[RMDB]
RNA sequence: GGGAACGACUCGAGUAGAGUCGAAAAGAUACAAUUUGUGACAUUAUCCAUUGAAGUGCAAUUUUGACCGUCUAAAACGAAGUUGGUUGGACAUGAAGUGCAUCCAAUUUUGUUGUCACAUGUCAAACGCGCAAUGUUCGUUCGCGAACAUUGCGCGAAAAGAAACAACAACAACAAC
Reactivity to 2A3 in 0.01 (KOAc 150mM, MgCl2 10mM, bicine 150mM(pH8.5), 24C), signal-to-noise 1, nucleotides 027 to 126: g050a000u300a050c150a090a150u000u000u140g130u000g000a000c050a050u020u150a060u080c150c080a160u130u300g130a120a010g130u100g170c020a140a160u000u000u000u130g030a070c000c010g020u140c000u300a070a070a070a070c000g000a000a000g000u000u070g000g010u080u000g010g000a000c000a060u010g180a150a000g030u030g030c000a000u000c000c000a000a000u000u000u000u000g050u000u000g000u000c000a000c140a140u120g000u020c000a000a000a000
An RNA of 177 nucleotides, treated with 2A3 and read out base by base. The 2A3 profile rests on 333 reads.